The data come from the RNA Mapping Database (RMDB), library OK1LIB.
An RNA of 177 nucleotides, treated with 2A3 and DMS and read out base by base.
The RNA was probed in 150 mM KOAc, 10 mM MgCl2 and 150 mM bicine (pH 8.5) at 24 C.
[RMDB]
RNA sequence: GGGAACGACUCGAGUAGAGUCGAAAAAGCACUUUUUGAAUUGUUUAUAUCGAGGGUGACACUUCAGGCCGAUUGAUAUAGUUGUUUGGUUUGUGGCCUGGUGGCGGAAACGGCGGUGUGUUAUGGCCAAUAUUAAUAAAUUCGUUUAUUAAUAUUGAAAAGAAACAACAACAACAAC
Reactivity to 2A3 in 0.01 (KOAc 150mM, MgCl2 10mM, bicine 150mM(pH8.5), 24C), signal-to-noise 2, nucleotides 027 to 126: a000g060c030a050c030u060u020u070u100u090g040a100a060u160u030g070u100u300u080a130u040a110u100c060g000a040g070g030g000u030g070a020c000a000c030u080u050c010a030g010g010c020c000g030a050u000u170g050a000u010a010u110a100g020u010u010g030u020u040u080g100g000u050u040u040g040u050g070g000c000c000u000g000g000u010g040g000c020g000g000a020a040a000c000g000g000c000g000g000u010g000u000g000u000u000a030u010g020g000c010
Reactivity to DMS in 0.01 (KOAc 150mM, MgCl2 10mM, bicine 150mM(pH8.5), 24C), signal-to-noise 6, nucleotides 027 to 126: a080g010c040a030c030u000u010u020u010u010g010a090a130u020u020g010u010u020u020a050u020a100u020c020g010a040g010g010g020u010g000a080c060a040c060u010u020c050a040g010g010c020c010g010a090u020u020g000a040u030a070u010a090g000u000u000g000u000u000u010g010g010u010u010u000g020u020g010g010c030c010u000g010g020u010g000g010c030g010g000a040a060a080c140g000g000c030g000g000u000g010u010g010u000u010a070u010g000g000c150

Background:
Reactivities are given for positions 27 through 126.